RNA sequence: GGGAACGACUCGAGUAGAGUCGAAAAGAGCCGACAGAGAAGUCGGGAAGCGACGAGAGAGAAUAGAAUACAUUGGAAUUCGAGAUACUGCCACAAAAUGACAGACGUCGCCAUAUUCUCCGAGAAGAUAUUACGGCGUCUUCGGACGCCGUAAUAUAAAAGAAACAACAACAACAAC
Reactivity to 2A3 in 0.01 (KOAc 150mM, MgCl2 10mM, bicine 150mM(pH8.5), 24C), signal-to-noise 1, nucleotides 027 to 126: g050a080g170c010c000g000a010c000a020g120a000g120a200a000g000u060c000g000g040g080a120a000g040c000g000a020c020g010a010g000a010g000a000g010a190a070u060a080g090a020a000u130a130c160a170u110u030g090g050a080a030u030u030c090g000a000g000a030u060a140c000u010g020c020c000a130c040a110a070a030a130u120g010a010c000a000g030a050c000g000u030c000g000c000c000a020u080a070u060u020c010u000c070c000g000a050g020a250a000g120
Reactivity to DMS in 0.01 (KOAc 150mM, MgCl2 10mM, bicine 150mM(pH8.5), 24C), signal-to-noise 1, nucleotides 027 to 126: g000a070g030c000c000g040a000c040a010g000a300g000a160a090g010u050c000g000g000g000a040a080g000c030g070a000c000g020a180g000a300g020a210g000a020a230u010a150g000a030a060u020a030c000a130u060u030g030g020a040a050u000u000c000g040a170g000a070u010a060c090u000g000c000c030a000c210a000a080a060a260u000g010a080c000a000g000a300c020g000u020c000g000c000c170a000u000a120u000u000c000u000c000c090g000a010g040a060a070g010
An RNA of 177 nucleotides, treated with 2A3 and DMS and read out base by base.
DMS adducts were read by reverse transcription with MarathonRT.
Reactivities are given for positions 27 through 126.
The DMS profile rests on 979 reads.
Reactivities are rounded to 0.1 and cut off at 0 and 3.
The 2A3 profile rests on 435 reads.
For 2A3 the reverse transcriptase was SuperScript II with manganese.